[RMDB]
RNA sequence: GGGAACGACUCGAGUAGAGUCGAAAAAAGGUAGCGUAAUACCUAGCCGCUUAAUUGGCGGCUCGCAUGAAGGUUCAACGAGAGUCCCACUGUCCCCACAUUCAGCCCCGUGAAAUUAAUGUACUGGUCACCUCCAGAAAUUCGUUUCUGGAGGUGAAAAAGAAACAACAACAACAAC
Reactivity to 2A3 in 0.01 (KOAc 150mM, MgCl2 10mM, bicine 150mM(pH8.5), 24C), signal-to-noise 3, nucleotides 027 to 126: a010a020g080g000u060a040g040c090g130u110a100a000u020a100c000c000u000a000g000c000c000g000c050u080u150a160a090u220u300g050g000c000g000g000c000u010c030g060c010a030u110g090a080a040g070g000u010u040c010a010a020c020g010a000g010a000g170u050c050c010c000a050c040u010g030u040c000c020c000c000a010c000a040u040u070c050a000g010c000c000c020c040g070u070g010a070a020a000u100u140a030a120u100g040u100a050c040u050g040g010
Reactivity to DMS in 0.01 (KOAc 150mM, MgCl2 10mM, bicine 150mM(pH8.5), 24C), signal-to-noise 3, nucleotides 027 to 126: a070a020g000g020u000a020g000c140g010u010a070a110u020a040c030c000u010a030g000c030c020g000c000u010u000a120a120u020u040g000g020c000g000g000c010u010c060g040c100a060u000g000a120a090g000g010u010u010c080a070a100c040g000a100g010a100g020u010c010c010c010a060c070u010g000u020c020c030c000c060a060c050a080u000u000c100a040g020c030c010c000c050g020u000g030a050a060a070u010u010a040a140u020g000u020a040c030u020g000g010